[RMDB]
RNA sequence: GGGAACGACUCGAGUAGAGUCGAAAAAAAGAUAUGGAUCAUCGAUGACCUUGGAUUUACUACGAUCCCUAUAUCGGAAACGAUAUAGAACUCGUAGUUGUCAGGUCGUUGAUGAUCCUAAGUCAAACAUGGCGAAAUGGUUCGCCAUUUCGCCAUGAAAAGAAACAACAACAACAAC
Reactivity to DMS in 0.01 (KOAc 150mM, MgCl2 10mM, bicine 150mM(pH8.5), 24C), signal-to-noise 1, nucleotides 027 to 126: a090a080a100g000a000u000a300u000g000g000a000u000c000a020u000c000g020a040u000g000a000c000c000u000u040g020g030a020u000u000u000a000c010u010a000c020g000a000u000c110c170c000u010a000u000a020u000c000g000g000a130a150a250c000g000a000u000a010u000a000g020a100a110c240u000c000g030u000a000g020u010u000g000u010c000a020g010g000u000c000g060u000u000g000a010u000g000a010u030c000c010u000a010a050g000u000c040a180a050a120
Chemical mapping of a 177-nucleotide RNA with DMS.
In probing experiments dimethyl sulfate is read out at A N1 and C N3, which are open when not base-paired.
For DMS the reverse transcriptase was MarathonRT.
The data come from the RNA Mapping Database (RMDB), library TTRDES.
The RNA was probed in 150 mM KOAc, 10 mM MgCl2 and 150 mM bicine (pH 8.5) at 24 C.